[RMDB]
RNA sequence: GGGAACGACUCGAGUAGAGUCGAAAAGAUAUGGAGAAUCAGUCUGACCGAUCAACUGGAGCUCGUAUGUCGGAAACGACAUACUGAGCGAUGAAAGUUGAGUCGGUCAGACUGAUUCUCCUAAGUCCUUCUUUUCUAUGUUCGCAUAGAAAAGAAGAAAAGAAACAACAACAACAAC
Reactivity to DMS in 0.01 (KOAc 150mM, MgCl2 10mM, bicine 150mM(pH8.5), 24C), signal-to-noise 1, nucleotides 027 to 126: g010a110u000a280u000g010g000a010g000a020a000u010c010a010g000u000c010u000g030a020c000c000g020a140u000c000a000a020c000u000g000g010a050g030c010u000c010g060u000a000u000g000u000c000g010g000a150a110a250c000g000a010c010a000u000a000c000u020g030a000g000c000g000a040u020g000a120a180a040g000u000u000g010a060g000u000c000g000g020u000c010a000g000a000c000u000g000a000u000u000c000u010c000c000u000a010a050g000u000c050